[RMDB]
RNA sequence: GGGAACGACUCGAGUAGAGUCGAAAAAACCGCUUUCAUGCUUGGGAUUGUGAACUGAAACUGUUCACAUGAACCUGCAUUGAUUACGUCCCUGCCCCUGUACACACCGCCCGUCGCUACUACGGAUCUAAGGUUCAUACUUCGGUAUGAACCUUAGAAAAGAAACAACAACAACAAC
Reactivity to DMS in 0.01 (KOAc 150mM, MgCl2 10mM, bicine 150mM(pH8.5), 24C), signal-to-noise 2, nucleotides 027 to 126: a050a020c110c010g030c060u010u000u000c030a080u000g010c010u000u000g040g000g000a190u000u000g010u040g000a000a010c000u040g020a060a110a180c300u000g000u000u000c010a030c020a000u010g010a300a240c000c030u010g000c000a000u010u000g020a080u000u010a100c100g000u000c030c010c010u000g000c040c040c010c010u000g020u000a070c040a110c070a050c060c070g010c040c000c030g030u000c060g020c060u000a040c170u000a060c080g010g000a180u010
Reactivity to 2A3 in 0.01 (KOAc 150mM, MgCl2 10mM, bicine 150mM(pH8.5), 24C), signal-to-noise 1, nucleotides 027 to 126: a010a010c030c010g000c050u040u010u010c010a010u030g010c000u090u060g000g020g040a060u050u010g000u000g000a010a000c000u050g060a150a190a080c190u150g010u040u020c000a000c000a020u020g000a030a080c020c000u000g010c020a030u010u100g040a010u050u020a030c000g040u030c010c000c020u020g080c020c000c010c000u000g100u140a030c070a010c010a000c030c010g020c000c010c000g030u030c020g050c040u030a040c010u030a060c030g030g020a020u000

An RNA of 177 nucleotides, treated with DMS and 2A3 and read out base by base. Values cover nucleotides 27 to 126. For 2A3, 1,580 sequencing reads were counted. The DMS profile rests on 1,079 reads. The RNA was probed in 150 mM KOAc, 10 mM MgCl2 and 150 mM bicine (pH 8.5) at 24 C.